The record gives the reactivity of an RNA of 177 nucleotides to DMS and 2A3. The RNA was probed in 150 mM KOAc, 10 mM MgCl2 and 150 mM bicine (pH 8.5) at 24 C. For DMS the reverse transcriptase was MarathonRT.
RNA sequence: GGGAACGACUCGAGUAGAGUCGAAAAGAUAUGGACGUCACCCACCUUUUGACGAAAGGUACUCGGAAACGAGUACGCUUUCGAUAAGGUGGUGACGUCCUAAGUCAAAAGGACAGUUCGCUGUCCAGUAUUGGAUGAGGUUCGCCUCAUCCAAUACAAAAGAAACAACAACAACAAC
Reactivity to DMS in 0.01 (KOAc 150mM, MgCl2 10mM, bicine 150mM(pH8.5), 24C), signal-to-noise 6, nucleotides 027 to 126: g010a040u010a300u010g000g000a020c010g010u000c000a010c190c060c100a010c000c000u000u000u020u010g010a260c140g000a000a000a010g000g000u000a000c010u000c010g000g010a130a130a200c010g010a020g020u000a010c000g020c000u000u010u000c000g010a100u000a030a000g010g020u000g000g010u000g000a000c000g010u000c000c000u010a010a050g020u010c030a070a100a120a120g010g000a020c000a010g010u020u010c300g030c000u000g010u000c000c000a090
Reactivity to 2A3 in 0.01 (KOAc 150mM, MgCl2 10mM, bicine 150mM(pH8.5), 24C), signal-to-noise 3, nucleotides 027 to 126: g030a020u060a050u140g010g000a000c000g020u010c000a020c040c130c010a050c000c050u030u140u130u260g300a170c040g010a010a000a000g000g000u000a000c000u000c020g010g080a030a080a070c010g000a010g010u000a000c000g020c010u000u010u000c010g010a020u020a040a020g000g000u020g010g000u010g000a000c000g010u000c000c000u010a000a010g010u000c000a000a000a040a090g020g000a000c000a020g000u080u150c300g100c220u000g000u000c000c010a010
2A3 adducts were read by reverse transcription with SuperScript II with manganese.